[RMDB]
Notes: Conditions: 150 mM KOAc, 10 mM MgCl2 and 150 mM bicine (pH 8.5), 24 C. The record gives the reactivity of an RNA of 177 nucleotides to 2A3 and DMS. Reactivities are given for positions 27 through 126. For 2A3 the reverse transcriptase was SuperScript II with manganese. The data come from the RNA Mapping Database (RMDB), libraries RFM100 and RFMREP.
RNA sequence: GGGAACGACUCGAGUAGAGUCGAAAAUAACGAAUAAACAUCUCUUAAAAGUAUGUGUAAAACGCUGCAUGAUACAAACGAAGGUAAAAAUUUGACUCCCUUUAGUAGUGGACCCGUACGUUAAUCGCAGCUGUAUAUGGUUCGCCAUAUACAGCUGAAAAGAAACAACAACAACAAC
Reactivity to 2A3 in 0.01 (KOAc 150mM, MgCl2 10mM, bicine 150mM(pH8.5), 24C), signal-to-noise 4, nucleotides 027 to 126: u130a020a020c060g020a010a060u160a100a050a040c040a190u020c050u020c040u130u160a110a080a020a030g050u030a050u050g030u010g070u060a060a110a060a070c060g040c060u030g000c010a040u070g050a070u140a050c030a020a090a010c050g070a090a040g060g040u150a040a000a010a150a180u030u100u100g020a050c000u010c000c000c000u030u050u070a100g020u010a030g000u050g040g030a020c030c000c000g040u100a070c050g010u000u090a030a010u110c070g000
Reactivity to DMS in 0.01 (KOAc 150mM, MgCl2 10mM, bicine 150mM(pH8.5), 24C), signal-to-noise 3, nucleotides 027 to 126: u020a060a150c080g000a140a070u010a100a060a090c060a030u000c060u020c040u000u010a050a070a090a080g020u000a010u010g000u000g020u020a050a080a200a100c190g010c050u020g000c030a030u020g010a100u010a020c070a070a110a100c100g000a040a020g000g000u030a020a070a060a060a110u000u020u000g000a050c060u010c040c040c020u010u000u000a050g020u030a040g030u020g010g000a130c020c000c020g030u000a060c100g000u000u010a030a100u000c110g000